[RMDB]
RNA sequence: GGGAACGACUCGAGUAGAGUCGAAAAAGUGACUUCAGCGCGUACGAGUACCUUGCGCUCGUUUUUAAAAAUGAAGUGCAAGGUCAUGUCGAACUGAUACGAGAUUCCGUCACCGACUGCCUGCGCGGUAGCCUAGAAGGUUCGCCUUCUAGGCUACAAAAGAAACAACAACAACAAC
Reactivity to DMS in 0.01 (KOAc 150mM, MgCl2 10mM, bicine 150mM(pH8.5), 24C), signal-to-noise 4, nucleotides 027 to 126: a100g010u010g010a090c080u000u010c020a010g010c300g000c030g020u010a030c020g000a170g020u010a030c000c000u000u000g010c000g040c000u000c020g010u000u000u000u010u020a030a070a080a020a010u000g000a090a030g030u000g000c000a010a000g010g010u000c020a050u010g000u010c010g000a080a050c040u000g000a040u000a090c140g000a130g010a150u000u000c050c040g010u010c020a040c010c040g010a060c090u000g020c040c000u000g020c090g020c160g000
Reactivity to 2A3 in 0.01 (KOAc 150mM, MgCl2 10mM, bicine 150mM(pH8.5), 24C), signal-to-noise 3, nucleotides 027 to 126: a010g070u030g040a040c010u030u000c040a020g020c010g000c000g060u170a040c010g020a010g040u110a020c000c020u000u000g020c000g000c010u010c030g020u010u010u010u020u080a190a210a020a010a010u050g150a170a020g010u000g000c010a010a000g010g000u000c000a020u060g010u000c000g010a050a020c010u020g030a040u060a110c080g040a040g040a180u130u040c030c020g000u020c010a020c040c010g040a050c030u030g030c030c010u050g020c080g010c040g100
The data come from the RNA Mapping Database (RMDB), library OK2TST. Structure probing data (DMS and 2A3) for a 177-nucleotide construct. The DMS profile rests on 5,084 reads.